An RNA of 207 nucleotides, treated with 2A3 and read out base by base.
For 2A3, 614 sequencing reads were counted.
Values cover nucleotides 27 to 156.
The data come from the RNA Mapping Database (RMDB), library M2RFOK.
RNA sequence: GGGAACGACUCGAGUAGAGUCGAAAACAUUCUUGAAAAAGUGAUGUAGAUUUAUAGCCCAUAACUUUUUUGAAUUACAUCGACGAUACGGCGUCGAAAGAAAAAUAAAUAGACCGUAUGAAAGAGAAAAACAACAGUAGCUUCGGCUACUGUUGAAGAGUAUAGUGACGUUCGCGUCACUAUACUCAAAAGAAACAACAACAACAAC
Reactivity to 2A3 in 0.01 (KOAc 150mM, MgCl2 10mM, bicine 150mM(pH8.5), 24C), signal-to-noise 1, nucleotides 027 to 156: c010a000u030u000c000u110u120g000a030a020a020a020a020g070u050g040a010u010g050u060a010g040a270u120u150u080a070u250a020g010c060c000c030a010u130a060a070c140u070u020u060u030u030u020g080a090a070u250u090a120c050a110u010c000g000a000c000g020a050u000a000c000g000g000c020g040u000c010g000a060a040a000g040a020a050a020a000a040u080a050a010a010u020a020g110a040c010c010g000u000a000u010g110a000a030a020g040a010g050a030a170a000a000a000c000a000a000c000a000g010u000a000g000c040u100u100c220g030g000c000u010a000c000u000g000u000u000g010a000a000